[RMDB]
RNA sequence: GGGAACGACUCGAGUAGAGUCGAAAAGACUCAGCUUUUCAAGUAGCUGGGACUACAGGCACAUGCCACCACGCCCAACUACUAUUUUUGUACUUUUUGUAGAGACGGGGUUUCACCAUGUUGCCCAAGCUGGUCUCGAACUCUCCAGGCUCAAGCACGUUCGUCAGUAUUUCGAUACUGACGAACGAAAAGAAACAACAACAACAAC
Reactivity to 2A3 in 0.01 (KOAc 150mM, MgCl2 10mM, bicine 150mM(pH8.5), 24C), signal-to-noise 2, nucleotides 027 to 156: g050a000c000u010c100a000g020c020u060u040u080u150c150a140a030g020u000a010g000c030u090g070g020g010a020c000u050a040c020a040g000g000c020a040c030a070u120g010c010c000a030c000c020a030c060g050c000c020c000a060a020c000u020a030c000u010a150u080u160u030u070u170g150u150a140c050u050u150u060u070u120g040u060a030g000a010g010a030c060g050g000g000g000u030u060u080c020a020c000c000a010u090g030u070u090g070c000c020c000a000a000g010c030u020g000g020u010c000u020c000g040a050a010c010u000c010u000c080c040a050g010g000c010u110c090a040a040g020c070a020
Annotation: Source: RMDB library OK3TST, as collected in RNAgym. An RNA of 207 nucleotides, treated with 2A3 and read out base by base. 2A3 adducts were read by reverse transcription with SuperScript II with manganese. Values cover nucleotides 27 to 156.